Structure probing data (DMS and 2A3) for a 177-nucleotide construct. The DMS profile rests on 9,740 reads. Source: RMDB library OK1LIB, as collected in RNAgym. For 2A3 the reverse transcriptase was SuperScript II with manganese.
RNA sequence: GGGAACGACUCGAGUAGAGUCGAAAACGUCACCUCGCCUCCUCCAACAUCGCCACGGCCACCGACAGGCAACGCCGCCGGACCUCUUCCCACUUUGCCUGGGCAUCAGCUCCGGGCGACUGGUCACGCAGACUAUAGAUUUCGAUCUAUAGUCUGCAAAAGAAACAACAACAACAAC
Reactivity to DMS in 0.01 (KOAc 150mM, MgCl2 10mM, bicine 150mM(pH8.5), 24C), signal-to-noise 5, nucleotides 027 to 126: c130g000u030c050a080c000c010u010c060g000c020c010u020c020c020u000c020c030a060a090c140a110u020c070g020c050c020a060c090g000g020c020c020a060c040c020g000a080c080a080g000g020c070a070a100c090g000c030c030g010c040c050g000g000a050c020c010u010c070u010u000c000c000c000a120c130u020u000u000g030c010c000u000g010g000g010c000a220u030c180a110g010c020u020c020c010g000g020g010c000g010a010c180u020g000g010u010c080a080c150
Reactivity to 2A3 in 0.01 (KOAc 150mM, MgCl2 10mM, bicine 150mM(pH8.5), 24C), signal-to-noise 9, nucleotides 027 to 126: c020g050u030c020a030c030c010u020c010g040c000c000u020c000c010u040c020c010a060a040c020a100u080c040g020c040c000a040c030g040g010c020c000a040c010c020g060a040c020a020g020g030c010a050a020c070g030c020c010g030c010c010g020g030a060c000c010u040c020u030u020c000c000c000a040c040u070u090u110g010c000c000u010g010g010g000c030a180u140c080a170g020c040u030c030c000g000g010g010c000g010a020c030u070g040g030u070c030a020c150